[RMDB]
RNA sequence: GGGAACGACUCGAGUAGAGUCGAAAAGCGAGGCGCGCUAGAGCCUCCGGAUUCGCGUCUAGAGCGCUCGCGACCGAUGCUGGGUCGGCCUUCGACCCUAGAGCCGUCGCGACGAUAGCGCCAACGGCAUUCGCUGUUAUUUCGAUAACAGCGAAUGAAAAGAAACAACAACAACAAC
Reactivity to DMS in 0.01 (KOAc 150mM, MgCl2 10mM, bicine 150mM(pH8.5), 24C), signal-to-noise 9, nucleotides 027 to 126: g010c040g010a080g010g010c030g010c030g020c080u000a070g000a160g010c040c030u000c040c030g010g000a130u000u000c210g010c190g010u000c010u000a030g000a130g010c030g010c070u000c000g010c020g010a050c050c040g000a060u020g020c040u000g000g010g010u000c000g000g010c230c210u010u010c010g010a020c010c000c000u000a020g000a070g010c040c250g000u000c040g010c010g010a060c110g000a130u000a060g010c010g010c010c040a090a080c100g000g000
Reactivity to 2A3 in 0.01 (KOAc 150mM, MgCl2 10mM, bicine 150mM(pH8.5), 24C), signal-to-noise 7, nucleotides 027 to 126: g050c040g020a040g030g000c020g000c010g010c110u060a020g010a020g100c010c020u020c020c020g030g030a100u130u110c060g000c030g070u010c020u040a040g010a030g100c030g020c070u010c010g000c000g000a010c010c060g040a080u170g010c020u020g010g000g000u010c000g000g100c060c060u180u180c010g010a000c000c000c030u050a080g030a010g100c020c010g010u010c000g010c020g010a030c030g050a070u110a050g000c010g000c010c010a080a040c030g060g000
This 177-nucleotide RNA was probed chemically with DMS and 2A3.
DMS adducts were read by reverse transcription with MarathonRT.
It was measured as part of the RMDB library OK2TRN.
The reactions ran in a buffer of 150 mM KOAc, 10 mM MgCl2 and 150 mM bicine (pH 8.5), at 24 C.
The DMS profile rests on 24,904 reads.